Chemical mapping of a 207-nucleotide RNA with 2A3. The RNA was probed in 150 mM KOAc, 10 mM MgCl2 and 150 mM bicine (pH 8.5) at 24 C.
[RMDB]
RNA sequence: GGGAACGACUCGAGUAGAGUCGAAAAGAAUGGGGUGAAAUGUUUCUGACCUAGGUUUGGUUUUAUAACAAUUUCUUCUGUGUGUAUUGUUUUCCCUGGGAUCUCAAAGGGCUAGCUGGGGGUGGAUCUUAGAGGAAAACACAGAUUUCACUUACAGGACGGUUAGCAAAUUCGUUUGCUAACCGUCAAAAGAAACAACAACAACAAC
Reactivity to 2A3 in 0.01 (KOAc 150mM, MgCl2 10mM, bicine 150mM(pH8.5), 24C), signal-to-noise 1, nucleotides 027 to 156: g070a030a120u090g010g000g020g020u030g040a050a150a140u040g040u110u040u050c110u050g120a100c000c000u010a130g120g000u090u050u050g060g020u090u040u160u070a130u070a200a030c040a060a140u010u060u050c000u080u030c030u060g030u010g000u000g010u040a070u170u070g050u030u030u020u020c000c000c000u000g000g030g000a020u000c160u030c090a120a110a040g020g030g030c020u070a040g030c050u160g000g000g000g000g000u050g020g000a000u000c000u000u000a030g030a070g050g000a000a040a000a000c000a010c000a000g050a030u000u110u030c010a000c000u110u250a030c070a070g120